Source information: Chemical mapping of a 207-nucleotide RNA with 2A3. Source: RMDB library M2RFPK, as collected in RNAgym. Reactivities are given for positions 27 through 156. The reactions ran in a buffer of 150 mM KOAc, 10 mM MgCl2 and 150 mM bicine (pH 8.5), at 24 C.
RNA sequence: GGGAACGACUCGAGUAGAGUCGAAAAAGGGAAGAAAAUAAUUUAGAAAGGAGAUUCCGCCCCAGCUUGCGGUGCGGCCGAAACGCUGUAAGGCAUCCCGGAGAGGGGAGGCAAGGCGAAAGCCAAAAACGGUACACCAUCUUCGGAUGGUGUACAACAUACCGCUCAAGUUCGCUUGAGCGGUAUGAAAAGAAACAACAACAACAAC
Reactivity to 2A3 in 0.01 (KOAc 150mM, MgCl2 10mM, bicine 150mM(pH8.5), 24C), signal-to-noise 1, nucleotides 027 to 156: a000g030g000g030a050a040g070a020a080a080a100u230a060a190u100u100u240a190g050a150a140a000g000g010a070g050a090u130u000c020c000g000c000c000c000c000a030g040c030u070u190g060c040g000g000u040g060c090g030g000c030c010g000a000a010a060c080g040c000u080g060u140a060a010g040g010c030a020u010c010c010c010g020g000a030g000a030g000g000g030g000a000g000g000c000a000a070g000g000c010g000a100a000a000g000c010c010a200a020a000a000a000c080g030g000u000a000c000a000c000c000a000u000c000u020u100c110g080g000a000u010g000g000u000g000u000a000c000a010a000